[RMDB]
RNA sequence: GGGAACGACUCGAGUAGAGUCGAAAAUUUGGGCAAAGCGUAAAAAGCCCAAAUAAAAUUAAACGCAAACAACGUUAAAUUCGCUCCUGCUUACGCUAAAGCUGCGUAAGUUCAGUUGAGCCUGAAAUUUAAGUCAUACUAUCUAGCUUAAUUUUCGCACGUUUAGGACGUUCGCGUCCUAAACGUGAAAAGAAACAACAACAACAAC
Reactivity to 2A3 in 0.01 (KOAc 150mM, MgCl2 10mM, bicine 150mM(pH8.5), 24C), signal-to-noise 1, nucleotides 027 to 156: u020u000u000g030g000g000c110a160a110a000g060c040g110u160a060a100a100a020a000g000c000c000c000a000a000a000u020a000a040a000a000u110u170a050a040a020c040g000c110a210a220a000c020a030a020c080g050u050u080a000a200a050u190u080c100g000c010u020c000c000u000g010c000u000u060a000c000g040c020u040a100a070a100g060c060u020g000c070g000u000a000a000g000u100u110c020a020g000u020u080g000a000g010c000c020u020g110a100a010a020u020u020u030a050a020g010u080c050a040u130a220c080u130a120u240c030u060a010g080c000u020u040a040a010u100u070u000u020c020g000